[RMDB]
RNA sequence: GGGAACGACUCGAGUAGAGUCGAAAAGAGGUUGCAGGGGUAGCAGACACAUGAACUCUGGCUCUGAUGGUCUUAUUGCUGCAAACUCCACCUGCCUAGUUUGUUUAGUUUAGAGUUACUGCCUCAGCGCCCUCCAACAAGAGUAUGUCUGUCACAAUCGUAUAUUUUACUUCGGUAAAAUAUACGAAAAAGAAACAACAACAACAAC
Reactivity to 2A3 in 0.01 (KOAc 150mM, MgCl2 10mM, bicine 150mM(pH8.5), 24C), signal-to-noise 3, nucleotides 027 to 156: g060a060g030g020u110u130g010c020a000g000g020g020g010u040a020g040c050a020g030a030c010a010c000a100u140g070a070a030c010u010c110u100g030g000c020u040c080u070g100a110u150g000g030u020c040u090u110a120u120u160g070c040u030g050c040a040a020a040c010u030c020c000a070c000c040u050g020c010c010u040a070g030u000u020u050g040u040u120u100a100g010u000u080u180a050g010a000g020u050u040a080c040u050g040c000c000u040c030a050g010c010g030c000c000c020u050c060c010a070a070c050a080a030g060a020g060u090a090u120g030u030c090u040g080u100c040a030c050a070a070
Reactivity to DMS in 0.01 (KOAc 150mM, MgCl2 10mM, bicine 150mM(pH8.5), 24C), signal-to-noise 2, nucleotides 027 to 156: g020a050g050g000u000u000g020c000a270g000g020g000g050u010a040g000c050a070g020a140c040a070c070a100u050g010a110a080c040u000c090u000g010g020c030u010c050u000g010a080u000g030g020u010c030u000u000a070u010u000g000c000u000g030c050a090a070a060c020u000c020c000a090c000c040u000g010c040c040u010a070g010u010u010u000g020u000u000u010a100g020u010u000u000a030g000a140g010u000u000a050c050u000g020c030c000u010c030a060g020c040g020c030c000c040u000c040c040a060a110c160a060a120g010a070g000u010a130u010g010u000c050u000g010u000c010a070c080a070a200
Record summary: Chemical mapping of a 207-nucleotide RNA with 2A3 and DMS. 2A3 adducts were read by reverse transcription with SuperScript II with manganese. DMS adducts were read by reverse transcription with MarathonRT. The DMS profile rests on 5,814 reads. The 2A3 profile rests on 1,963 reads. It was measured as part of the RMDB library OK3TST. In probing experiments dimethyl sulfate is read out at A N1 and C N3, which are open when not base-paired.